[RMDB]
RNA sequence: GGGAACGACUCGAGUAGAGUCGAAAAGUCAAGAUGUGUAGGAUAGGUGGGAGGCUUUGAAGUGUGGACGCCAGUCUGCAUGGAGCGGACCUUGAAAUACCACCCUUUAAUGGAAAAACAAAGUGAACGUGGAAUGUAUCUUCGGAUACAUUCCACGAAAAGAAACAACAACAACAAC
Reactivity to DMS in 0.01 (KOAc 150mM, MgCl2 10mM, bicine 150mM(pH8.5), 24C), signal-to-noise 1, nucleotides 027 to 126: g000u010c060a080a040g010a130u000g010u020g020u000a030g010g020a100u010a020g020g010u010g010g000g000a170g010g000c040u000u000u020g010a060a060g020u000g020u000g000g020a030c000g010c130c140a070g010u000c000u000g010c010a060u010g020g010a210g010c050g000g000a080c000c040u000u000g000a090a020a060u000a110c010c020a020c020c020c020u000u000u000a050a060u000g000g000a020a070a100a010a110c100a060a080a070g000u000g020a060a120